The data come from the RNA Mapping Database (RMDB), library OK2TST. Structure probing data (DMS and 2A3) for a 177-nucleotide construct. For 2A3, 3,759 sequencing reads were counted. The DMS profile rests on 4,183 reads. DMS adducts were read by reverse transcription with MarathonRT.
RNA sequence: GGGAACGACUCGAGUAGAGUCGAAAACGCGCGUGAGGUCGCGGGCCGCAAGUCCAGCCCGCUGAGCAUCAGACCGGUCGCGGUCAGGUGGAUGUGGCUGUCCACGAACCCCGGCGCCACGAAUCGGGUGCCUUUCUUAUUUCGAUAAGAAAGGCACAAAAGAAACAACAACAACAAC
Reactivity to DMS in 0.01 (KOAc 150mM, MgCl2 10mM, bicine 150mM(pH8.5), 24C), signal-to-noise 4, nucleotides 027 to 126: c060g020c130g000c020g020u010g020a220g010g010u000c040g030c040g010g000g020c020c040g010c120a090a130g020u010c100c040a220g000c010c010c010g020c040u000g010a100g010c030a060u000c090a180g030a050c020c020g020g010u010c160g020c020g010g020u000c060a050g020g010u000g010g010a080u010g010u010g010g010c070u010g000u010c020c020a050c020g010a070a130c050c020c000c030g000g000c050g010c010c040a040c080g000a080a090u010c070g000g010
Reactivity to 2A3 in 0.01 (KOAc 150mM, MgCl2 10mM, bicine 150mM(pH8.5), 24C), signal-to-noise 2, nucleotides 027 to 126: c020g000c000g030c030g030u050g050a090g000g070u040c030g000c020g000g000g000c030c000g040c110a090a040g030u020c010c020a000g020c020c000c020g000c030u060g050a030g060c020a050u080c010a020g020a020c010c030g060g090u170c120g010c020g100g040u030c040a050g000g080u040g000g040a070u080g000u030g050g000c030u060g070u060c010c000a020c020g020a050a110c020c000c010c000g030g000c060g040c000c020a020c030g050a030a070u150c070g080g000